Annotation: This 177-nucleotide RNA was probed chemically with DMS. The RNA was probed in 150 mM KOAc, 10 mM MgCl2 and 150 mM bicine (pH 8.5) at 24 C.
RNA sequence: GGGAACGACUCGAGUAGAGUCGAAAAAUGACUCUGGUGGCCCCAGAAAUUAAACCUGGAAAGAGUGUUCGUGGGAGCGUGGUGAUCACCAAAAGCAAGGCAGACAGCCAUGGCUCCGGGUCACAGACCCUGCUGUAAGGUUCGCCUUACAGCAGGGAAAAGAAACAACAACAACAAC
Reactivity to DMS in 0.01 (KOAc 150mM, MgCl2 10mM, bicine 150mM(pH8.5), 24C), signal-to-noise 1, nucleotides 027 to 126: a130u000g010a110c030u000c030u000g020g030u010g050g000c100c040c000c040a020g010a060a060a070u030u020a050a170a080c100c010u000g000g000a100a050a030g000a060g060u000g010u000u000c000g000u000g030g020g010a040g030c010g110u020g010g010u010g000a170u000c030a150c010c040a070a040a070a120g020c290a190a060g000g030c020a070g010a040c140a220g000c000c000a020u000g040g000c000u000c010c050g000g000g020u010c010a020c060a190g000a190
The DMS profile rests on 907 reads.